[RMDB]
RNA sequence: GGGAACGACUCGAGUAGAGUCGAAAACGCCAGCUGAAUCGAAGCUAGUAUCGAGUGCGAGUUCCUACUUGAUGCGUUUGCAAAGCGCAACUCAUAGUUGCGAAAGCUGGCACUUGUGAAUGUGUACGAUCAUCGUUUAUUUCGAUAGGUGAUGAUCAAAAGAAACAACAACAACAAC
Reactivity to 2A3 in 0.01 (KOAc 150mM, MgCl2 10mM, bicine 150mM(pH8.5), 24C), signal-to-noise 9, nucleotides 027 to 126: c060g000c000c000a010g000c010u040g070a080a100u100c060g030a090a010g000c000u000a000g010u000a020u010c000g000a000g000u010g040c030g030a060g020u020u010c000c000u010a020c000u000u020g000a000u020g000c020g070u030u110u100g010c030a030a030a030g050c000g000c000a000a000c000u040c060a160u100a110g000u000u000g000c000g020a090a010a000g010c000u000g000g020c000a020c010u050u090g030u040g080a100a090u100g030u020g010u070a030c060
Reactivity to DMS in 0.01 (KOAc 150mM, MgCl2 10mM, bicine 150mM(pH8.5), 24C), signal-to-noise 9, nucleotides 027 to 126: c160g010c000c010a010g000c000u000g010a120a080u020c090g000a120a190g010c010u010a080g010u030a020u000c010g000a010g010u000g010c200g010a150g000u000u010c010c000u000a040c030u010u000g000a020u000g000c010g010u030u020u000g010c030a040a090a120g000c020g000c000a010a010c010u010c250a120u040a090g010u000u000g000c010g000a060a100a050g010c000u000g000g000c000a100c090u010u010g000u010g000a070a100u030g000u010g010u020a090c200